[RMDB]
An RNA of 177 nucleotides, treated with DMS and 2A3 and read out base by base. The data come from the RNA Mapping Database (RMDB), libraries RFM100 and RFMREP.

RNA sequence: GGGAACGACUCGAGUAGAGUCGAAAACGGAAGAGGGCGACUGUAUUGCGUAGCGAGAGGUGAAAGUUGACGACCUACGUAGGACAAACCGAAGCGAAAGCUGUCGUCCAGUACGUUUCCGGUGAUCCCACGGCAAACGUUUCGACGUUUGCCGUGGAAAAGAAACAACAACAACAAC
Reactivity to DMS in 0.01 (KOAc 150mM, MgCl2 10mM, bicine 150mM(pH8.5), 24C), signal-to-noise 2, nucleotides 027 to 126: c010g000g000a040a080g000a070g010g000g000c030g000a070c020u000g010u030a040u010u010g010c020g000u000a030g000c030g000a210g010a080g010g000u030g000a060a100a280g000u000u020g010a040c070g010a110c300c020u010a000c000g010u010a010g000g000a040c000a000a100a030c240c250g000a070a050g000c000g000a030a060a090g000c000u000g000u010c000g010u000c000c010a100g000u020a070c160g000u020u000u000c000c000g020g080u020g000a120u000c020
Reactivity to 2A3 in 0.01 (KOAc 150mM, MgCl2 10mM, bicine 150mM(pH8.5), 24C), signal-to-noise 1, nucleotides 027 to 126: c000g000g000a060a010g010a070g000g000g000c000g010a000c010u000g000u090a030u030u290g000c050g000u030a000g030c000g030a030g020a030g090g050u160g140a140a000a020g160u110u090g120a100c030g000a000c000c060u010a000c020g000u020a000g000g050a010c060a000a100a020c110c000g010a050a000g000c000g000a090a040a020g000c020u000g000u000c000g000u010c010c000a000g000u060a010c080g000u000u000u000c010c000g080g020u070g010a070u070c000
Annotation: DMS (dimethyl sulfate) methylates the pairing face of unpaired adenines and cytosines. DMS adducts were read by reverse transcription with MarathonRT.